[RMDB]
Chemical mapping of a 177-nucleotide RNA with 2A3 and DMS. It was measured as part of the RMDB library OK1LIB. For 2A3 the reverse transcriptase was SuperScript II with manganese. For DMS, 7,185 sequencing reads were counted.
RNA sequence: GGGAACGACUCGAGUAGAGUCGAAAAUCGGUACAGUCCUAGAUGUCCAAAUGCGAAAUUACACUUAUGCACGACCUUUCCUAAAUGGUUAUUAUUUCCAGAUUGGGGUUGAGACUGCACGACGGCAGUUGGUCAUGAUUUUCGAAUCAUGACCAACAAAAGAAACAACAACAACAAC
Reactivity to 2A3 in 0.01 (KOAc 150mM, MgCl2 10mM, bicine 150mM(pH8.5), 24C), signal-to-noise 9, nucleotides 027 to 126: u050c020g010g010u090a080c010a020g050u010c010c000u070a060g040a170u120g080u050c010c010a040a080a060u100g020c080g090a040a040a070u200u170a070c100a020c080u160u150a070u220g030c020a020c070g040a050c010c000u050u090u090c020c020u100a110a110a040u080g020g070u010u020a060u110u060a090u030u090u020c030c010a040g120a240u040u080g040g000g000g010u040u050g020a060g000a040c000u010g020c030a000c040g100a020c010g040g050c030a040
Reactivity to DMS in 0.01 (KOAc 150mM, MgCl2 10mM, bicine 150mM(pH8.5), 24C), signal-to-noise 4, nucleotides 027 to 126: u050c010g000g020u020a090c050a040g010u000c020c050u010a110g010a060u030g030u030c030c020a040a060a080u010g040c130g000a080a070a030u010u010a100c150a040c060u010u020a080u040g010c060a060c050g010a080c070c020u020u020u040c010c020u010a050a090a070u030g000g010u020u020a040u020u010a070u010u020u000c010c010a010g000a070u010u000g010g020g000g010u000u000g010a090g000a150c070u000g000c120a050c080g010a060c140g010g040c120a090